An RNA of 207 nucleotides, treated with DMS and 2A3 and read out base by base.
The reactions ran in a buffer of 150 mM KOAc, 10 mM MgCl2 and 150 mM bicine (pH 8.5), at 24 C.
RNA sequence: GGGAACGACUCGAGUAGAGUCGAAAACACAGUGUCAUACAUUUUCAAGAUAUCGAAAACAAUUGGUAUGGUCGCCAACGGCCCUAUUCCAGAUGCUAGAAACGCAGCCGCAAGGGCCAAGGGUGAAGCAGCUGAGUUUCGUUACAAAUAUGGUUACCUUGGCAGUGUAAUUCGUUACACUGCCAAGAAAAGAAACAACAACAACAAC
Reactivity to DMS in 0.01 (KOAc 150mM, MgCl2 10mM, bicine 150mM(pH8.5), 24C), signal-to-noise 1, nucleotides 027 to 156: c020a130c060a110g000u000g000u000c010a160u010a100c040a150u000u020u000u000c100a140a120g010a230u000a080u000c030g000a080a060a060a020c130a080a210u010u000g080g040u000a020u020g010g040u000c020g030c000c040a050a170c000g000g040c000c060c010u000a060u000u010c050c040a100g000a120u000g000c060u010a220g020a020a070a050c230g020c010a040g000c000c020g000c130a070a070g000g000g030c050c050a030a000g000g050g030u000g000a160a090g050c000a060g010c070u000g000a140g000u000u000u000c020g020u010u000a060c050a130a070a130u000a020u000g000g010u000u000a140c080
Reactivity to 2A3 in 0.01 (KOAc 150mM, MgCl2 10mM, bicine 150mM(pH8.5), 24C), signal-to-noise 4, nucleotides 027 to 156: c130a000c010a050g090u050g030u100c010a040u060a120c030a060u100u070u030u090c100a130a130g050a240u110a090u150c070g040a030a010a020a020c070a070a080u120u100g040g000u090a140u100g020g060u040c010g000c010c000a060a060c080g000g000c060c000c000u060a150u130u050c040c010a030g010a070u080g050c040u040a060g240a060a160a050c110g020c040a010g060c040c040g090c070a050a030g020g040g000c000c000a020a040g160g000g010u020g020a010a020g050c030a000g000c030u010g010a010g040u020u020u010c020g010u050u050a030c050a010a120a070u250a100u140g070g000u080u060a040c020
Values cover nucleotides 27 to 156. High 2A3 reactivity points to a flexible backbone, as in loops and unpaired stretches.